Source information
Conditions: 150 mM KOAc, 10 mM MgCl2 and 150 mM bicine (pH 8.5), 24 C. An RNA of 177 nucleotides, treated with 2A3 and read out base by base.
RNA sequence: GGGAACGACUCGAGUAGAGUCGAAAACGCCGUCCUGAACAAUACUUAAGCUGCUGACGCGUCAUCAUUCCCCAAAUGACUCGGCAGUAGAGGUGCCAAAGGACUCGCGCGCCUUUGUUUUACUCCUCGUACGCCGUAGGUUCGCCUACGGCGUACGAAAAGAAACAACAACAACAAC
Reactivity to 2A3 in 0.01 (KOAc 150mM, MgCl2 10mM, bicine 150mM(pH8.5), 24C), signal-to-noise 1, nucleotides 027 to 126: c000g000c010c020g020u030c000c020u070g040a020a010c020a150a110u110a060c030u080u130a150a010g020c010u010g000c000u000g070a010c040g010c060g040u000c000a010u000c010a090u060u220c000c000c010c000a020a050a000u010g010a000c010u000c020g000g000c000a000g010u020a000g030a060g040g020u050g050c020c030a090a010a010g070g030a010c040u040c080g010c000g030c020g000c000c000u000u000u000g060u000u040u000u050a090c110u110c010c010u010